Chemical mapping of a 207-nucleotide RNA with 2A3 and DMS. Conditions: 150 mM KOAc, 10 mM MgCl2 and 150 mM bicine (pH 8.5), 24 C. The DMS profile rests on 5,716 reads. It was measured as part of the RMDB library OK3TST. For 2A3 the reverse transcriptase was SuperScript II with manganese.
[RMDB]
RNA sequence: GGGAACGACUCGAGUAGAGUCGAAAACAUUUAUAGAUGCUGCUGCUGAGCUAAAUGUAAAUGUCAUGUAUUCCUUUGCUACUCAAAGUGUAGUCUCCUGAACAGCAGCAUCUGGAAACUGGUUAGAUAUGCAGAAGAGUAUUGAAUCUGCAUUUCAGGCUAAUAGCAUAUUCGUAUGCUAUUAGCCAAAAGAAACAACAACAACAAC
Reactivity to 2A3 in 0.01 (KOAc 150mM, MgCl2 10mM, bicine 150mM(pH8.5), 24C), signal-to-noise 4, nucleotides 027 to 156: c020a010u100u150u090a170u110a040g010a010u010g000c010u000g000c000u000g020c040u070g030a020g000c040u080a110a090a040u170g070u150a030a120a130u160g090u120c040a060u140g110u140a140u080u190c000c000u080u040u040g020c040u040a040c030u040c150a070a070a060g090u140g010u060a000g040u040c020u070c020c070u060g080a160a050c010a000g000c000a000g000c000a000u000c000u010g000g020a050a030a050c070u040g090g000u030u140a020g010a050u030a010u030g000c000a000g000a090a020g040a060g170u130a120u110u100g050a080a070u010c000u010g020c010a000u000u010u040c010a000
Reactivity to DMS in 0.01 (KOAc 150mM, MgCl2 10mM, bicine 150mM(pH8.5), 24C), signal-to-noise 3, nucleotides 027 to 156: c030a060u000u010u000a110u010a090g020a090u000g000c000u000g030c010u000g020c010u020g020a090g010c090u000a040a110a120u000g000u010a040a050a050u010g030u010c050a140u000g030u000a130u000u000c050c030u000u010u000g050c040u000a060c030u000c040a130a080a160g020u010g010u010a110g000u010c030u000c060c050u010g020a030a020c000a020g040c010a020g030c010a040u000c010u020g010g000a080a080a070c050u000g020g010u000u010a100g010a080u000a020u000g050c010a090g020a060a110g010a220g010u000a160u010u000g020a300a180u000c010u000g020c000a030u000u000u010c040a190